The record gives the reactivity of an RNA of 177 nucleotides to DMS and 2A3.
The data come from the RNA Mapping Database (RMDB), library RFM100.
DMS adducts were read by reverse transcription with MarathonRT.

[RMDB]
RNA sequence: GGGAACGACUCGAGUAGAGUCGAAAAUUAUAACGGCGUAACAGGCCUUCUCUCAAGGAGGGUUAUGCGCCGUGAUUCCAUGGAAUAAGGAGCGUUUAGGGGCCAGGUUAUUAAGCGACGAGGGGUGGACAUCUUUACCCUUCGGGGUAAAGAUGUCAAAAGAAACAACAACAACAAC
Reactivity to DMS in 0.01 (KOAc 150mM, MgCl2 10mM, bicine 150mM(pH8.5), 24C), signal-to-noise 2, nucleotides 027 to 126: u040u000a050u050a100a000c020g000g000c000g000u000a050a070c220a180g000g010c000c000u010u000c010u020c050u070c300a210a300g000g010a000g000g000g000u000u020a110u000g070c000g010c030c000g010u000g010a080u000u010c000c000a060u020g010g070a210a060u010a090a110g030g070a050g010c060g010u010u020u000a060g020g010g010g000c100c070a070g000g000u000u000a030u010u040a060a140g010c130g020a070c090g000a030g010g000g010g040u010g000
Reactivity to 2A3 in 0.01 (KOAc 150mM, MgCl2 10mM, bicine 150mM(pH8.5), 24C), signal-to-noise 1, nucleotides 027 to 126: u300u200a010u040a110a000c000g010g010c020g020u010a180a090c020a120g000g040c030c000u000u020c010u000c030u030c020a030a020g020g000a000g000g070g010u000u050a040u100g000c020g000c010c010g010u000g000a000u010u000c040c000a020u120g140g040a150a110u120a180a120g050g000a050g030c020g000u070u080u100a000g020g010g020g020c080c000a050g000g000u000u040a010u090u050a140a060g040c030g020a070c030g010a040g000g000g100g000u010g050